Source: RMDB library M2RFPK, as collected in RNAgym. The record gives the reactivity of an RNA of 207 nucleotides to DMS and 2A3. DMS adducts were read by reverse transcription with MarathonRT. The 2A3 profile rests on 3,767 reads. The reactions ran in a buffer of 150 mM KOAc, 10 mM MgCl2 and 150 mM bicine (pH 8.5), at 24 C.
[RMDB]
RNA sequence: GGGAACGACUCGAGUAGAGUCGAAAAGAUUCCUCGUUGUUGAGCGAGGUUUAAACAAAUCGACCACACGAACGUAGAGCCGACUACGGAUUUAUAAAUUAAGGCAUUAAGUGUGAUAAGGAGACAAAAAACGAUGUUGUGUUCGCACAACAUCGAAGACAUUUCAAUCGUUCGCGAUUGAAAUGUCAAAAGAAACAACAACAACAAC
Reactivity to DMS in 0.01 (KOAc 150mM, MgCl2 10mM, bicine 150mM(pH8.5), 24C), signal-to-noise 2, nucleotides 027 to 156: g020a300u010u020c000c010u000c040g000u000u000g030u010u010g020a190g010c040g040a040g050g000u000u000u000a030a040a140c090a040a090a170u000c020g020a070c020c050a020c000a070c010g000a100a060c010g000u020a050g010a140g010c010c050g040a120c020u000a050c040g010g000a300u010u010u000a040u020a070a020a070u000u010a030a110g000g020c010a270u000u020a070a230g000u000g030u010g010a070u000a040a120g000g010a170g020a040c090a020a070a030a060a030a180c010g000a060u010g020u000u000g060u000g020u010u000c300g000c010a030c010a010a020c020a000u000c000g020a010a110
Reactivity to 2A3 in 0.01 (KOAc 150mM, MgCl2 10mM, bicine 150mM(pH8.5), 24C), signal-to-noise 5, nucleotides 027 to 156: g080a070u180u130c000c000u000c000g000u000u020g000u010u010g000a000g000c000g000a000g010g030u060u150u060a020a020a010c050a010a000a030u010c000g000a010c000c000a000c000a000c000g040a140a000c000g000u000a000g010a010g010c000c010g050a010c000u000a000c000g010g020a010u040u300u020a160u130a070a020a010u130u120a000a000g000g000c000a000u040u270a140a070g000u000g000u000g020a000u020a050a050g180g020a090g020a050c160a030a170a030a030a040a050c010g000a000u000g000u000u000g000u000g020u040u050c210g030c080a000c000a000a000c010a000u000c000g010a010a000